[RMDB]
This 177-nucleotide RNA was probed chemically with DMS and 2A3. DMS adducts were read by reverse transcription with MarathonRT.
RNA sequence: GGGAACGACUCGAGUAGAGUCGAAAAGAUAUGGACUGGUUGUAUGGGAGCUGUUGGGUCGGAAACGACCCUGCAGCAUCGAUCAUACACCCAGUCCUAAGUCAAAAGCUGGCGUUCGCGCCAGCAACUCACGUAAAAACUUCGGUUUUUACGUGAGAAAAGAAACAACAACAACAAC
Reactivity to DMS in 0.01 (KOAc 150mM, MgCl2 10mM, bicine 150mM(pH8.5), 24C), signal-to-noise 2, nucleotides 027 to 126: g000a060u000a300u000g000g010a020c000u000g000g000u000u000g010u000a000u000g000g010g010a040g030c000u000g020u000u010g000g000g040u000c020g010g010a080a080a240c000g000a050c000c000c000u000g000c000a020g000c000a120u000c180g010a070u010c000a010u000a000c000a010c080c010c010a040g000u010c000c000u000a000a050g010u020c060a170a090a080a170g000c010u010g000g020c000g020u010u030c300g020c030g030c010c000a000g020c010a020a040
Reactivity to 2A3 in 0.01 (KOAc 150mM, MgCl2 10mM, bicine 150mM(pH8.5), 24C), signal-to-noise 2, nucleotides 027 to 126: g020a010u070a050u120g000g000a010c000u000g020g020u030u000g000u010a010u020g050g050g040a110g000c000u010g010u020u040g000g000g000u010c000g050g000a040a070a050c000g010a020c010c020c010u000g020c000a000g020c000a020u090c000g020a110u070c000a010u010a000c000a020c010c010c000a010g010u000c000c000u000a010a000g010u000c020a020a050a050a130g000c000u000g000g000c000g050u070u150c300g020c010g000c170c000a000g000c010a000a000
Record summary:
For 2A3 the reverse transcriptase was SuperScript II with manganese.